Structure probing data (2A3) for a 207-nucleotide construct. The reactions ran in a buffer of 150 mM KOAc, 10 mM MgCl2 and 150 mM bicine (pH 8.5), at 24 C. For 2A3 the reverse transcriptase was SuperScript II with manganese.

RNA sequence: GGGAACGACUCGAGUAGAGUCGAAAACACAGGCAUACUUCGAAGAGGCUAAGCGCGCCUCCGUCGUGCAGCAGCUCGCACGACAGGUACCGCUUUCCGCUAACGGCGCGGCUGUACCCGUGGUUACCUCCAAGCCUCGCGCCGGGUGGGUAGCAGAACCUAUCUGGAGAUUCGUCUCCAGAUAGGUAAAAGAAACAACAACAACAAC
Reactivity to 2A3 in 0.01 (KOAc 150mM, MgCl2 10mM, bicine 150mM(pH8.5), 24C), signal-to-noise 2, nucleotides 027 to 156: c060a000c000a000g040g000c040a050u060a160c100u050u160c160g040a110a050g030a030g050g040c040u070a180a040g060c040g010c010g010c040c000u030c050c050g000u000c000g030u010g030c030a120g030c000a030g060c050u130c120g000c000a020c000g000a000c000a020g010g030u060a040c010c020g010c000u020u050u050c020c000g000c040u050a130a120c030g010g010c010g000c030g050g000c020u070g010u120a090c000c020c050g120u170g050g000u120u100a080c030c020u000c080c020a050a000g010c000c000u090c100g000c000g010c000c000g020g020g000u070g010g010g010u010a040g060c100a030g010a070